An RNA of 207 nucleotides, treated with 2A3 and DMS and read out base by base. It was measured as part of the RMDB library OK3TST.
RNA sequence: GGGAACGACUCGAGUAGAGUCGAAAAUCAGCAACUACUGUGGCAACUACAUUCUCUGCUUAUGGAACUGUUUCGAGCAUUCGUAUGCUAUCUCAUAAGCAUUCAGCUUUUCUUAAUUUUGAUUCUGUUGAAACUGCAAAGCAUGUUCUCGAAGAGAAGGUAAAUAGCCAUUCGUGGCUAUUUACCUAAAAGAAACAACAACAACAAC
Reactivity to 2A3 in 0.01 (KOAc 150mM, MgCl2 10mM, bicine 150mM(pH8.5), 24C), signal-to-noise 6, nucleotides 027 to 156: u080c010a010g040c010a050a050c020u120a030c030u060g020u070g070g000c020a060a030c030u100a040c040a110u160u040c070u000c010u060g020c000u050u030a040u060g020g050a080a080c080u100g060u100u100u110c060g000a020g050c050a070u110u180c100g070u220a020u070g000c000u020a060u090c080u000c090a030u040a070a020g000c010a010u030u040c010a010g020c010u040u070u060u010c020u040u210a250a300u160u130u080u100g070a070u080u010c040u100g070u070u040g050a070a050a040c060u060g000c040a070a040a040g020c010a030u050g030u060u040c050u030c050g070a070a050g050a020g050a140
Reactivity to DMS in 0.01 (KOAc 150mM, MgCl2 10mM, bicine 150mM(pH8.5), 24C), signal-to-noise 1, nucleotides 027 to 156: u020c070a140g010c030a080a120c030u000a050c030u000g040u000g000g010c050a070a090c030u000a060c040a050u000u010c040u010c050u010g020c030u000u000a060u000g030g010a010a020c080u010g010u000u010u000c030g010a120g040c070a140u010u010c120g030u000a050u000g020c010u000a080u010c070u000c060a050u000a040a050g010c010a070u000u000c030a090g010c030u000u000u010u000c030u010u020a060a090u000u020u000u000g010a090u000u010c040u000g010u010u010g000a050a030a070c030u000g000c060a120a070a080g010c070a080u010g010u000u000c020u000c030g000a070a050g010a100g010a130
The DMS profile rests on 3,386 reads. The reactions ran in a buffer of 150 mM KOAc, 10 mM MgCl2 and 150 mM bicine (pH 8.5), at 24 C.